[RMDB]
RNA sequence: GGGAACGACUCGAGUAGAGUCGAAAAUCUCUCUUGUUCGCAAGAGAGAAAAGAACGCCAAAGUGACGCAAACUUCCGCGUCAGGAAGCCGAAACGAGGUAAAAAGGGGGAUCUUCGGAUCCCCCAACAAAUGACAAUUCUUCGGAAUUGUCAUUUGAAAAGAAACAACAACAACAAC
Reactivity to 2A3 in 0.01 (KOAc 150mM, MgCl2 10mM, bicine 150mM(pH8.5), 24C), signal-to-noise 2, nucleotides 027 to 126: u000c000u000c000u000c000u010u020g020u040u050c190g000c110a000a010g000a000g050a000g010a020a010a000a000g010a040a000c080g010c010c010a060a040a040g100u050g030a010c010g000c030a110a100a020c020u080u030c080c040g030c010g090u030c000a000g010g020a040a010g010c030c020g040a020a050a070c070g010a060g050g000u060a040a080a010a050a100g010g010g000g000g000a000u010c010u010u040c060g020g000a000u020c080c010c000c000c000a000a000
Reactivity to DMS in 0.01 (KOAc 150mM, MgCl2 10mM, bicine 150mM(pH8.5), 24C), signal-to-noise 5, nucleotides 027 to 126: u000c000u000c000u000c000u000u000g010u000u010c200g030c010a010a000g000a020g010a000g000a020a040a090a080g010a120a110c150g030c030c030a030a090a120g010u000g010a140c030g000c060a080a120a140c050u010u010c030c120g020c160g010u010c150a050g010g010a040a040g000c040c010g000a030a120a030c080g000a170g000g020u000a020a020a060a140a090g000g000g020g000g010a010u000c000u000u020c160g020g010a020u000c000c000c000c000c010a000a020